About this RNA: The record gives the reactivity of an RNA of 177 nucleotides to DMS and 2A3. The DMS profile rests on 8,304 reads. Reactivities are given for positions 27 through 126.
[RMDB]
RNA sequence: GGGAACGACUCGAGUAGAGUCGAAAAGGUGAGGUCUAUGUCGAUGCUUCGCCGGAUCUGUGGUCCUUUCUGCAGAACGCACUGACCACUGCGCGCACAUUGACCAGCCAACAGCGCGAUCUGGAUGAAACAUCUCCCAAUUCGUUGGGAGAUGUUUAAAAGAAACAACAACAACAAC
Reactivity to DMS in 0.01 (KOAc 150mM, MgCl2 10mM, bicine 150mM(pH8.5), 24C), signal-to-noise 5, nucleotides 027 to 126: g000g020u020g000a050g000g010u000c070u030a100u030g020u000c090g020a090u010g020c060u000u010c050g010c030c000g010g010a060u020c060u000g000u020g000g000u020c050c200u000u020u020c090u010g020c060a100g000a090a200c170g000c040a050c160u020g000a060c060c030a040c030u000g010c050g010c050g000c120a110c140a130u020u000g010a050c060c090a280g010c050c010a080a090c140a070g010c030g010c000g000a080u020c020u010g030g010a110u020g000
Reactivity to 2A3 in 0.01 (KOAc 150mM, MgCl2 10mM, bicine 150mM(pH8.5), 24C), signal-to-noise 6, nucleotides 027 to 126: g020g000u080g050a090g010g010u050c050u130a080u100g070u080c040g130a080u090g060c050u100u100c050g020c040c010g000g040a080u010c060u080g000u020g020g010u040c020c050u030u170u070c050u060g030c030a050g030a300a060c070g040c030a020c070u030g040a050c030c010a020c030u030g000c060g000c010g010c010a020c020a070u020u100g050a060c010c010a010g010c000c000a020a030c030a070g020c040g010c010g040a070u000c000u040g090g040a100u090g150